[RMDB]
RNA sequence: GGGAACGACUCGAGUAGAGUCGAAAAGGGUCAAUUUCAUUUUCAUUGUAGACAAUGGGGUUCAUUUGGUACACCUGGACUCAUUUACCAAUAUGAUUAAUGCAACCUGGCCCCAAGGCUGACAGACCCUAUAGGUGAGGUUCGCCUCACCUAUAGGAAAAGAAACAACAACAACAAC
Reactivity to DMS in 0.01 (KOAc 150mM, MgCl2 10mM, bicine 150mM(pH8.5), 24C), signal-to-noise 5, nucleotides 027 to 126: g010g000g030u000c030a070a110u000u000u010c020a030u000u000u010u010c020a040u010u000g010u020a150g010a080c200a050a030u000g010g000g000g000u010u000c000a030u000u010u000g010g010u010a070c210a100c100c090u000g000g010a020c030u000c030a050u000u000u000a170c130c080a060a080u010a030u000g000a030u000u000a020a050u010g000c120a020a030c130c090u000g000g000c020c000c010c050a080a080g000g010c080u000g020a110c130a120g000a130c120
Reactivity to 2A3 in 0.01 (KOAc 150mM, MgCl2 10mM, bicine 150mM(pH8.5), 24C), signal-to-noise 5, nucleotides 027 to 126: g010g000g000u020c020a010a050u010u030u090c020a020u030u040u040u050c030a020u030u070g100u140a050g030a120c060a050a040u070g070g000g030g030u070u050c020a080u110u030u190g100g010u130a060c100a070c100c040u000g010g020a010c010u000c040a020u070u060u040a090c040c000a020a000u090a030u080g020a020u050u150a090a020u050g020c010a000a040c020c040u010g020g000c020c000c020c010a030a010g070g020c050u040g020a040c020a050g070a080c020

Description
The data come from the RNA Mapping Database (RMDB), library OK2TRN. The record gives the reactivity of an RNA of 177 nucleotides to DMS and 2A3. For DMS, 5,040 sequencing reads were counted. For 2A3 the reverse transcriptase was SuperScript II with manganese. Values are in units of 0.01, from 0 to 300, in steps of 10. Values cover nucleotides 27 to 126. DMS adducts were read by reverse transcription with MarathonRT.